[RMDB]
RNA sequence: GGGAACGACUCGAGUAGAGUCGAAAAAUGUGUAUAACUUCUUAAUAAGAGAAGUUAUCUCCUUUGUGUUGUUUAUAGUAACAAAACAAAUUUUGCUCGAAGUACUGUGACAGUACCUAGUCCUUACGAAUACGAAUUCGUUCGCGAAUUCGUAUUCAAAAGAAACAACAACAACAAC
Reactivity to DMS in 0.01 (KOAc 150mM, MgCl2 10mM, bicine 150mM(pH8.5), 24C), signal-to-noise 1, nucleotides 027 to 126: a050u000g000u010g000u010a010u000a000a010c010u000u000c000u010u000a090a200u010a120a210g010a030g010a040a000g000u000u000a010u000c010u000c010c110u000u000u020g030u000g010u020u000g000u010u000u000a110u010a140g010u040a000a000c030a030a010a040a070c090a040a030a160u000u000u010u010g020c020u000c040g000a110a150g010u000a010c020u000g030u020g010a070c080a040g000u000a030c030c050u000a140g000u000c010c020u010u000a070c300